[RMDB]
RNA sequence: GGGAACGACUCGAGUAGAGUCGAAAAAGCAGCGGACGAUGGCACCCUCCAUGCACGCAACGCCGUGCGGUGCACCACAUGAUCCCUACAUAUCACUCCACUGCGUCGGCGACGAUAGCUUCGCGUGGACGGGAUACCUGUUCGCAGGUAUCCCGUCAAAAGAAACAACAACAACAAC
Reactivity to 2A3 in 0.01 (KOAc 150mM, MgCl2 10mM, bicine 150mM(pH8.5), 24C), signal-to-noise 5, nucleotides 027 to 126: a010g030c040a020g010c010g020g010a050c030g070a100u110g040g010c020a050c020c010c000u050c070c010a050u130g000c030a010c020g010c020a200a150c090g060c120c010g010u010g000c000g000g000u030g010c060a060c050c010a050c010a040u100g030a060u060c000c000c010u050a050c050a060u220a020u060c070a020c050u030c010c000a040c030u090g010c000g050u110c050g050g020c010g010a090c040g060a130u090a110g030c030u070u040c030g000c010g040u040g040
Reactivity to DMS in 0.01 (KOAc 150mM, MgCl2 10mM, bicine 150mM(pH8.5), 24C), signal-to-noise 2, nucleotides 027 to 126: a130g000c130a150g040c000g000g000a020c050g040a080u000g000g000c100a080c010c030c160u000c060c080a060u020g000c050a010c060g030c020a210a080c090g000c000c030g010u010g000c020g000g000u000g000c070a110c050c030a050c140a130u030g000a130u000c030c000c040u010a100c100a030u010a060u020c110a100c160u000c040c000a020c000u020g030c000g000u020c020g000g000c020g040a060c160g060a120u030a050g040c060u030u040c050g000c000g010u000g000